Record summary: This 177-nucleotide RNA was probed chemically with DMS and 2A3. The RNA was probed in 150 mM KOAc, 10 mM MgCl2 and 150 mM bicine (pH 8.5) at 24 C. The 2A3 profile rests on 118,555 reads. Source: RMDB library OK1LIB, as collected in RNAgym.
[RMDB]
RNA sequence: GGGAACGACUCGAGUAGAGUCGAAAAACUAGUAUGUACAGGGGUGAGUUGACCUGUCAUCUAGACUGCUGACCAUCAGCUCACCGGUCAGCUGGAUGAUGUCCACAGAGUACGACAUCAGUACUCAGAGUAAGGAUGGGUUCGCCUAUCUUUACUCAAAAGAAACAACAACAACAAC
Reactivity to DMS in 0.01 (KOAc 150mM, MgCl2 10mM, bicine 150mM(pH8.5), 24C), signal-to-noise 9, nucleotides 027 to 126: a160c010u000a010g000u050a010u000g000u060a010c010a010g000g010g010g010u020g010a100g030u010u010g000a070c010c010u000g000u000c000a000u000c010u000a010g000a190c050u000g010c010u000g000a010c010c030a110u020c130a100g000c080u010c080a060c160c140g000g010u000c000a010g000c000u010g000g000a100u020g010a080u010g000u010c010c020a110c240a110g000a040g010u000a020c050g010a130c140a080u030c100a100g000u010a010c010u000c020a180
Reactivity to 2A3 in 0.01 (KOAc 150mM, MgCl2 10mM, bicine 150mM(pH8.5), 24C), signal-to-noise 9, nucleotides 027 to 126: a000c010u010a000g050u110a040u040g050u070a010c000a010g020g020g020g050u110g070a120g040u060u060g100a080c000c000u000g000u000c000a000u000c000u000a010g040a080c020u030g000c000u000g010a000c000c000a050u110c030a030g020c030u030c040a070c020c040g000g000u000c000a000g000c010u010g030g010a070u090g010a020u060g050u020c010c000a050c050a050g030a010g020u030a010c050g100a030c090a160u120c050a050g010u010a010c010u010c030a010